[RMDB]
RNA sequence: GGGAACGACUCGAGUAGAGUCGAAAAACUUUUAGCGAUUAUCGUUAUAGAAAUGUCCUUGGCAUAUCGCUAUGCACAGAGGUAUUAGUAGCGCAAUAGCUAUUGAAGGACAUUACCUGUCAAAUAAGCAAAAAAGAAGAUUCGUCUUCUUUUUUGCAAAAGAAACAACAACAACAAC
Reactivity to 2A3 in 0.01 (KOAc 150mM, MgCl2 10mM, bicine 150mM(pH8.5), 24C), signal-to-noise 3, nucleotides 027 to 126: a010c010u130u070u020u050a020g000c030g030a060u090u150a130u300c010g020u020u040a040u020a040g070a030a070a010u010g000u000c000c000u020u040g020g000c050a040u020a030u300c030g000c020u000a020u080g070c120a050c020a110g260a080g110g100u170a110u150u100a090g050u010a030g000c010g000c040a060a120u020a030g000c000u030a060u060u220g060a020a000g000g000a000c000a000u000u010a050c000c000u050g070u090c010a070a080a170u130a170a050
Reactivity to DMS in 0.01 (KOAc 150mM, MgCl2 10mM, bicine 150mM(pH8.5), 24C), signal-to-noise 4, nucleotides 027 to 126: a140c050u000u000u000u000a020g010c020g010a250u010u000a070u000c040g020u000u000a040u000a070g020a060a040a020u000g010u000c010c000u000u000g000g010c050a040u000a020u010c070g010c030u000a020u000g010c120a110c120a080g000a100g030g010u000a050u000u000a090g000u000a020g000c030g000c180a060a060u000a100g000c000u010a040u000u010g010a030a020g020g000a020c020a010u000u000a080c070c020u000g010u010c130a070a070a110u010a080a140